[RMDB]
Overview:
Conditions: 150 mM KOAc, 10 mM MgCl2 and 150 mM bicine (pH 8.5), 24 C. This 207-nucleotide RNA was probed chemically with 2A3.
RNA sequence: GGGAACGACUCGAGUAGAGUCGAAAAAAAAAAGAGGGCAAGUAAGGAGGGGUAAACAAUGUAUGCAACUCCAGCAGAUUUAAGGCUAGUCAUGAAUAACCUCUCAAAGCAAGUCACAGAUGAGUUACUUGAGAAGUACAUUCUUGAGGCUUCAAACCGUACGACGUGAAUUCGUUCACGUCGUACGAAAAGAAACAACAACAACAAC
Reactivity to 2A3 in 0.01 (KOAc 150mM, MgCl2 10mM, bicine 150mM(pH8.5), 24C), signal-to-noise 2, nucleotides 027 to 156: a000a000a000a000a000a000g040a050g000g000g000c120a090a030g060u100a060a010g030g000a010g050g020g020g020u010a020a050a000c030a080a160u110g020u070a010u040g020c060a070a130c070u060c030c030a010g000c010a020g050a120u120u120u160a120a010g050g000c010u000a010g060u060c030a020u040g080a070a000u070a090a000c000c020u060c010u060c050a070a000a000g030c020a010a000g010u080c000a000c040a040g110a040u170g010a030g060u050u020a020c010u010u010g030a010g010a060a000g080u090a090c040a260u100u020c000u090u050g000a000g010g000c000u040u060c030a010a000a060c090